[RMDB]
RNA sequence: GGGAACGACUCGAGUAGAGUCGAAAAACGCUGCCGACGGUCGGAGGAAGUCCGCCCGGCGACUCGCCGCCGGCUGGCUGUCGGUUCGUCGAACGCUGUCCGUUCGCUCGCGAUAGCUGUCGAGACGCGGUCAGGGGUGGUUCGCCACCCCUGACCGAAAAGAAACAACAACAACAAC
Reactivity to 2A3 in 0.01 (KOAc 150mM, MgCl2 10mM, bicine 150mM(pH8.5), 24C), signal-to-noise 1, nucleotides 027 to 126: a000c060g000c140u080g000c030c010g000a000c080g100g000u110c040g020g020a010g050g220a300a080g150u070c030c120g000c000c000c000g000g000c040g050a080c000u070c130g090c000c030g000c000c000g000g000c000u000g060g000c000u000g020u000c000g020g000u120u010c010g020u030c030g000a000a060c040g050c090u030g130u100c000c020g010u060u080c030g010c300u080c000g000c040g000a040u130a000g000c080u120g090u200c060g060a070g000a070c020g000
An RNA of 177 nucleotides, treated with 2A3 and read out base by base. For 2A3 the reverse transcriptase was SuperScript II with manganese. Conditions: 150 mM KOAc, 10 mM MgCl2 and 150 mM bicine (pH 8.5), 24 C.